Notes
This 207-nucleotide RNA was probed chemically with DMS and 2A3. DMS (dimethyl sulfate) methylates the pairing face of unpaired adenines and cytosines. Values cover nucleotides 27 to 156. For DMS the reverse transcriptase was MarathonRT. Values are in units of 0.01, from 0 to 300, in steps of 10. For 2A3 the reverse transcriptase was SuperScript II with manganese.

RNA sequence: GGGAACGACUCGAGUAGAGUCGAAAAGAAACAGGAUCGACAAGGGUGUAAAGAUCGCUCUUUUACUCGGCAGGAUACCACCGUUAUCGGGUCAACAGAGUAGUUGCAAAUGACAACAAUGCUCAGGAAGGGGUAGCACCGUUCGCGGUGCUACCAACCAUCAUUUCUUGUUCGCAAGAAAUGAUGGAAAAGAAACAACAACAACAAC
Reactivity to DMS in 0.01 (KOAc 150mM, MgCl2 10mM, bicine 150mM(pH8.5), 24C), signal-to-noise 2, nucleotides 027 to 156: g000a110a080a080c050a120g020g000a070u000c020g030a150c040a070a090g030g020g020u000g000u020a070a080a100g000a110u000c060g000c050u000c020u000u000u000u000a090c030u000c040g020g020c040a150g000g010a140u000a090c040c010a080c010c010g010u000u010a070u000c040g030g000g000u000c040a090a100c040a130g010a050g020u000a090g040u000u000g000c020a070a040a140u020g000a130c020a050a020c020a030a040u010g000c000u000c010a040g000g020a180a130g030g010g000g030u000a020g010c000a000c000c010g010u000u010c280g050c020g050g000u020g000c000u000a000c000c000a020a050
Reactivity to 2A3 in 0.01 (KOAc 150mM, MgCl2 10mM, bicine 150mM(pH8.5), 24C), signal-to-noise 7, nucleotides 027 to 156: g020a010a120a020c070a050g080g040a050u040c030g040a030c060a070a090g090g080g030u060g020u100a090a130a020g060a040u080c020g020c040u030c010u020u060u030u040a060c030u020c010g010g000c020a020g010g210a040u090a130c020c010a020c000c020g050u050u040a050u110c070g000g010g010u010c010a030a030c050a080g020a010g020u080a010g010u010u010g030c040a060a180a280u200g050a140c010a030a000c010a050a150u100g010c010u020c030a000g080g070a060a040g070g040g010g000u000a000g000c000a000c000c010g010u040u030c170g000c020g050g000u000g000c000u000a000c000c000a000a000